Source: RMDB library OK2TST, as collected in RNAgym. Structure probing data (2A3 and DMS) for a 177-nucleotide construct. For DMS the reverse transcriptase was MarathonRT. For 2A3, 3,097 sequencing reads were counted. 2A3 adducts were read by reverse transcription with SuperScript II with manganese.

RNA sequence: GGGAACGACUCGAGUAGAGUCGAAAAGGUGCGCAUGAUGUCCAUCCACGUCAGCCGCGCAGCCUGUCGGAUGAAGGAAAAUUCGGUGAAACGGAAGUCAGCGCACUCACCUCCACCCCAGGCAGUACCUGAGUAGGGAUUUCGAUCCCUACUCAGGAAAAGAAACAACAACAACAAC
Reactivity to 2A3 in 0.01 (KOAc 150mM, MgCl2 10mM, bicine 150mM(pH8.5), 24C), signal-to-noise 2, nucleotides 027 to 126: g010g000u010g010c020g000c090a280u040g010a030u030g080u030c030c000a050u000c030c020a080c050g070u050c010a020g000c020c030g000c010g020c040a020g050c000c020u050g050u050c010g010g090a100u150g050a090a130g090g100a080a100a040a070u170u060c040g040g020u120g010a070a040a010c040g010g000a070a000g020u030c010a000g000c000g000c000a010c010u090c030a040c000c000u000c020c000a070c010c000c000c000a010g080g040c020a040g070u030a110
Reactivity to DMS in 0.01 (KOAc 150mM, MgCl2 10mM, bicine 150mM(pH8.5), 24C), signal-to-noise 2, nucleotides 027 to 126: g010g040u010g000c000g060c040a130u000g000a080u010g000u000c030c050a070u010c050c140a080c070g010u000c050a140g000c070c050g030c180g030c110a090g020c130c050u000g030u020c050g040g010a050u010g000a040a120g010g000a040a070a120a120u000u000c050g060g000u010g000a060a100a100c120g030g020a020a160g020u000c000a020g000c000g000c010a000c000u000c140a170c040c020u000c020c020a110c000c010c010c030a100g010g040c100a040g010u010a170